[RMDB]
RNA sequence: GGGAACGACUCGAGUAGAGUCGAAAACCUUCCUCCCCUCCGGGAUUUCUUCUGAUCGGACUGGCUCAUCCUCGGAAACGGGGGCGGCGGCGUCCGUUCUCUAUUCUUUUCUUUUGAAAGAGGAGACUAACUAAGGGGUUCGCCCCUUAGAAAAGAAACAACAACAACAAC
Reactivity to DMS in 0.01 (KOAc 150mM, MgCl2 10mM, bicine 150mM(pH8.5), 24C), signal-to-noise 6, nucleotides 027 to 129: c030c060u010u030c030c030u020c030c040c020c020u020c030c060g020g070g030a110u020u010u010c030u000u030c090u000g030a030u050c070g000g000a100c040u020g020g030c060u060c050a170u010c060c020u030c000g040g040a070a080a140c080g000g010g000g000g000c060g020g030c000g000g000c110g020u000c020c010g000u000u000c000u000c050u000a150u040u020c000u000u020u010u080c020u030u030u030u060g020a100a040a040g020a040g010g010a060g020a050c200u000a020a090
Reactivity to 2A3 in 0.01 (KOAc 150mM, MgCl2 10mM, bicine 150mM(pH8.5), 24C), signal-to-noise 6, nucleotides 027 to 129: c010c000u010u020c000c000u040c000c000c000c020u000c030c010g070g010g030a070u060u060u000c060u070u010c050u090g040a100u070c000g020g000a000c040u120g060g010c000u010c010a040u030c010c000u030c010g040g000a050a040a040c050g000g000g000g000g020c000g020g000c010g050g060c050g030u000c000c000g000u020u000c000u000c000u020a230u120u040c010u050u050u030u030c020u080u200u130u230g140a110a040a000g010a000g020g020a010g010a010c030u060a070a000

Chemical mapping of a 170-nucleotide RNA with DMS and 2A3. The 2A3 profile rests on 18,764 reads. It was measured as part of the RMDB library 15KLIB. For DMS, 25,100 sequencing reads were counted. DMS adducts were read by reverse transcription with MarathonRT. Reactivities are rounded to 0.1 and cut off at 0 and 3. The reactions ran in a buffer of 150 mM KOAc, 10 mM MgCl2 and 150 mM bicine (pH 8.5), at 24 C.